[RMDB]
RNA sequence: GGGAACGACUCGAGUAGAGUCGAAAAUUGGCACAGAUGAAGAAGACAAGAAAAAUGUCUGCUUUGUGAGAAUACCAUAGUAGGUCCUUCAGACAGGAGGUACUUUAUUAAGAAGGAGCAAUUCUCAUUAAUAAAGAUUUAGAGAGAUCACUUAUAAUAUGAUAAUGACUUUCGAGUCAUUAUCAUAAAAAGAAACAACAACAACAAC
Reactivity to 2A3 in 0.01 (KOAc 150mM, MgCl2 10mM, bicine 150mM(pH8.5), 24C), signal-to-noise 1, nucleotides 027 to 156: u070u020g040g020c010a000c010a040g100a070u140g020a060a060g070a060a010g020a050c070a030a070g140a120a110a050a010a070u060g010u000c000u010g050c050u030u030u130g040u020g000a040g010a030a100u060a120c000c010a020u040a140g070u030a020g110g080u030c000c000u000u060c030a080g010a180c050a080g060g000a000g030g010u000a040c000u030u130u020a010u060u020a040a100g030a070a020g020g000a020g050c020a050a040u120u010c050u020c020a000u060u050a010a020u040a110a040a020g020a010u000u050u150a180g010a000g000a010g010a050u020c000a000c050u000u120a070u020a300a140
Reactivity to DMS in 0.01 (KOAc 150mM, MgCl2 10mM, bicine 150mM(pH8.5), 24C), signal-to-noise 2, nucleotides 027 to 156: u000u010g030g020c000a050c030a140g000a070u010g010a020a050g030a030a010g010a010c020a050a130g030a080a060a170a160a160u010g000u010c010u000g030c030u010u000u010g030u010g030a140g010a180a240u000a010c030c030a130u010a120g040u000a070g000g010u000c030c000u000u000c050a120g030a180c110a110g020g010a090g000g020u000a060c000u050u010u000a010u010u000a000a030g010a200a140g000g010a060g000c180a140a180u000u000c010u000c020a220u000u000a000a010u020a040a010a070g010a300u000u000u000a110g000a150g010a050g010a050u000c030a040c020u020u010a040u000a070a250
An RNA of 207 nucleotides, treated with 2A3 and DMS and read out base by base. The 2A3 profile rests on 556 reads.